[RMDB]
An RNA of 177 nucleotides, treated with DMS and 2A3 and read out base by base. The RNA was probed in 150 mM KOAc, 10 mM MgCl2 and 150 mM bicine (pH 8.5) at 24 C.

RNA sequence: GGGAACGACUCGAGUAGAGUCGAAAAGGAUGCAACGUAGUAAGGUGUGUGACUUCUACCUCUUGAGUCACACAUUACUGGUCGUAGUGCGAUUCAAGAGGUAGAUCGCGUUACGACCGUUGUAUCGCUACGACUGACAAUUCGUUGUUAGUUGUAGAAAAGAAACAACAACAACAAC
Reactivity to DMS in 0.01 (KOAc 150mM, MgCl2 10mM, bicine 150mM(pH8.5), 24C), signal-to-noise 9, nucleotides 027 to 126: g010g000a010u000g000c000a010a010c010g010u010a140g010u010a060a060g010g010u000g010u010g010u000g010a040c070u000u000c090u000a100c080c050u000c050u000u000g000a020g010u000c000a010c010a010c000a030u000u000a030c040u000g000g010u000c060g010u000a020g010u000g010c020g000a010u000u000c060a090a080g010a080g010g010u000a050g000a010u000c000g010c000g010u000u000a010c000g000a040c110c010g000u000u000g010u000a010u000c000g010
Reactivity to 2A3 in 0.01 (KOAc 150mM, MgCl2 10mM, bicine 150mM(pH8.5), 24C), signal-to-noise 9, nucleotides 027 to 126: g040g000a000u000g000c000a000a000c020g050u050a030g020u040a130a090g100g020u020g000u000g010u010g030a010c010u060u010c020u070a100c010c030u080c020u020u060g010a000g000u000c000a000c000a000c000a010u000u040a020c010u010g000g030u030c010g000u000a000g000u000g000c000g000a000u050u050c040a040a020g060a020g070g060u020a020g000a000u000c000g000c000g010u000u000a000c000g010a000c000c020g000u000u000g000u000a000u000c000g000